[RMDB]
RNA sequence: GGGAACGACUCGAGUAGAGUCGAAAAUCGAAAUCAUCGGGAGUGAUCCAGAUGACGGUCCUGCCAUGAGACAGCAACGAGAGCAUGUCGCAUCGAAUGGACUCGGGGAGUCGGCAGCUUGCCCCACUAAGGCAGACGUUGUUCGCAACGUCUGCAAUCUCUGUCUUAACUUCGGUUAAGACAGAGAAAAAGAAACAACAACAACAAC
Reactivity to DMS in 0.01 (KOAc 150mM, MgCl2 10mM, bicine 150mM(pH8.5), 24C), signal-to-noise 2, nucleotides 027 to 156: u000c050g010a060a190a060u020c000a010u000c010g000g010g000a060g000u010g010a300u000c000c000a050g000a030u000g000a050c050g010g010u000c020c030u000g000c150c030a080u000g020a090g000a030c010a040g000c040a060a300c100g000a150g000a290g030c040a070u000g010u000c050g010c000a100u000c080g000a180a210u000g000g020a050c040u000c080g010g000g030g040a070g000u000c020g000g000c030a140g010c120u020u000g000c030c000c000c040a050c110u010a120a140g020g010c000a010g000a060c000g000u020u000g010u000u010c240g020c020a050a010c060g000u010c020u010g000c000a010a000
Reactivity to 2A3 in 0.01 (KOAc 150mM, MgCl2 10mM, bicine 150mM(pH8.5), 24C), signal-to-noise 5, nucleotides 027 to 156: u100c020g010a030a020a030u030c000a010u020c010g030g000g010a030g030u160g050a100u010c000c020a020g000a020u030g030a020c040g020g020u010c010c000u020g030c000c010a010u020g010a010g000a030c010a000g050c010a070a140c190g120a080g010a030g180c080a200u040g010u010c010g000c010a020u020c080g040a040a030u050g020g000a010c040u020c110g040g010g000g000a010g030u040c020g030g030c020a030g070c070u100u210g020c010c000c000c000a040c060u110a060a070g120g000c000a000g000a010c010g000u000u000g020u030u050c150g020c110a000a010c000g000u000c000u000g000c000a000a000

Conditions: 150 mM KOAc, 10 mM MgCl2 and 150 mM bicine (pH 8.5), 24 C. This 207-nucleotide RNA was probed chemically with DMS and 2A3. For DMS the reverse transcriptase was MarathonRT. It was measured as part of the RMDB library M2RFPK.